An RNA of 207 nucleotides, treated with DMS and 2A3 and read out base by base. Values cover nucleotides 27 to 156. Source: RMDB library M2RFPK, as collected in RNAgym.

RNA sequence: GGGAACGACUCGAGUAGAGUCGAAAAUCAUCAGGAAGUAGGCUUAGGCCAAUUGCUUGGUGGUGAAAGUAGAGGGAAGGUAGCACUUCGACGCCUCUAAGUACGCUGUGGGAGUAGUGCUUAAAUCAAAAGCACAGCGACUUCGGUCGCUGUGCAACGAUAGCAAUGGGUUCGCCCAUUGCUAUCGAAAAGAAACAACAACAACAAC
Reactivity to DMS in 0.01 (KOAc 150mM, MgCl2 10mM, bicine 150mM(pH8.5), 24C), signal-to-noise 1, nucleotides 027 to 156: u000c020a050u000c070a020g000g010a040a060g020u000a140g010g060c040u000u000a180g060g020c010c050a020a110u010u000g010c000u000u000g030g040u000g000g010u000g000a090a050a100g000u000a060g000a060g010g010g010a130a050g010g030u010a040g010c090a110c040u010u000c050g020a120c080g030c040c000u000c040u000a090a130g000u000a050c070g030c000u010g020u000g010g020g000a070g030u000a090g000u000g000c050u010u000a040a090a130u000c070a050a060a090a150g030c000a020c000a000g040c020g010a040c000u010u000c300g060g030u000c000g020c000u010g000u000g000c000a000a000
Reactivity to 2A3 in 0.01 (KOAc 150mM, MgCl2 10mM, bicine 150mM(pH8.5), 24C), signal-to-noise 3, nucleotides 027 to 156: u030c000a000u000c010a000g040g020a070a050g060u070a020g040g000c010u080u110a070g150g000c020c010a020a080u080u040g010c010u000u020g010g010u010g000g010u020g020a130a110a010g070u110a020g020a020g020g050g010a040a020g030g010u030a020g020c030a040c080u020u040c030g050a040c050g060c010c000u030c020u020a040a040g050u010a020c050g000c050u040g000u090g060g030g020a060g020u080a020g000u030g000c020u040u060a020a070a050u190c100a070a060a020a000g000c000a000c000a000g000c000g000a000c000u020u050c160g060g000u000c000g000c000u000g000u010g030c000a000a010